This 207-nucleotide RNA was probed chemically with DMS and 2A3.
RNA sequence: GGGAACGACUCGAGUAGAGUCGAAAACUCACUCACUACGGUGAGUGAGAAUGCUUAAGCCUCAAUAAACCUUGCCUUGAGUGCCUCAAGCAGAUAUAGACUGAAACAUUUAGUAUGGGCAAGGAGGGAGCAACGGCUCGAGUACGCUCGAGCCGAAUAUUUAAAUCGUGUUCGCACGAUUUAAAUAAAAAGAAACAACAACAACAAC
Reactivity to DMS in 0.01 (KOAc 150mM, MgCl2 10mM, bicine 150mM(pH8.5), 24C), signal-to-noise 2, nucleotides 027 to 156: c020u000c000a050c010u010c000a020c010u000a110c300g100g010u000g010a040g020u010g000a020g000a060a040u000g000c010u000u000a040a100g010c000c000u000c020a110a080u000a080a090a120c000c000u010u010g050c040c020u000u000g000a050g040u000g010c070c020u000c070a180a070g010c040a140g000a220u010a150u010a130g020a140c040u010g000a110a050a060c030a090u010u000u010a060g010u000a070u000g010g000g010c020a020a020g040g020a120g010g000g010a120g010c000a040a130c020g000g000c000u010c000g020a030g020u000a050c300g030c000u000c000g030a020g020c010c000g000a000a010
Reactivity to 2A3 in 0.01 (KOAc 150mM, MgCl2 10mM, bicine 150mM(pH8.5), 24C), signal-to-noise 3, nucleotides 027 to 156: c000u000c000a000c000u010c000a000c000u050a010c170g120g000u000g000a000g000u000g000a000g000a030a040u050g010c000u030u050a070a010g000c000c010u040c010a060a120u100a150a150a110c020c000u000u010g000c000c010u050u050g050a030g070u110g040c000c020u130c090a060a050g010c010a000g110a010u200a020u050a080g110a080c070u080g080a090a140a030c050a050u130u130u040a060g020u030a060u160g030g000g000c000a000a010g020g020a020g020g050g030a020g050c050a080a070c010g000g000c000u000c010g000a010g010u050a030c230g000c070u000c000g000a000g000c010c000g000a000a000
Annotation: The RNA was probed in 150 mM KOAc, 10 mM MgCl2 and 150 mM bicine (pH 8.5) at 24 C. Reactivities are rounded to 0.1 and cut off at 0 and 3. The data come from the RNA Mapping Database (RMDB), library OK3TST.